[RMDB]
RNA sequence: GGGAACGACUCGAGUAGAGUCGAAAAUCUUCAUCGGUCAGCCUUCUGAGUUCCUCUUCUUCCUCCUUGCUGAGGAUCUUUCCUCCCGCGGAGAGCUGCUUCUUCUUGUUCUCGAGGGCCUUCCUUCACCUUUGUAGGAGUUCGCUCCUACAAAGGUAAAAGAAACAACAACAACAAC
Reactivity to 2A3 in 0.01 (KOAc 150mM, MgCl2 10mM, bicine 150mM(pH8.5), 24C), signal-to-noise 1, nucleotides 027 to 126: u030c020u140u070c030a100u070c030g040g040u030c020a000g050c000c000u040u030c010u060g040a040g060u010u090c000c020u010c030u040u030c000u040u020c010c000u000c000c030u050u070g000c080u030g050a030g000g030a020u000c040u040u100u040c000c010u010c080c010c010g040c050g000g040a030g010a020g020c030u040g000c000u060u050c000u060u000c000u030u060g050u120u000c020u000c020g000a060g060g050g030c010c010u030u000c010c000u030u070c040
Reactivity to DMS in 0.01 (KOAc 150mM, MgCl2 10mM, bicine 150mM(pH8.5), 24C), signal-to-noise 1, nucleotides 027 to 126: u000c030u010u010c060a090u010c070g010g000u010c080a130g000c040c030u010u000c020u020g010a140g010u010u000c010c020u000c050u000u010c030u020u000c040c000u010c030c000u010u000g010c040u000g000a070g000g000a070u000c080u010u000u000c030c020u000c000c050c060g060c170g010g010a070g000a060g000c090u000g010c070u000u010c030u000u020c030u000u010g000u000u010c010u000c040g000a070g020g020g000c080c070u000u010c000c010u000u010c100
Structure probing data (2A3 and DMS) for a 177-nucleotide construct. High 2A3 reactivity points to a flexible backbone, as in loops and unpaired stretches.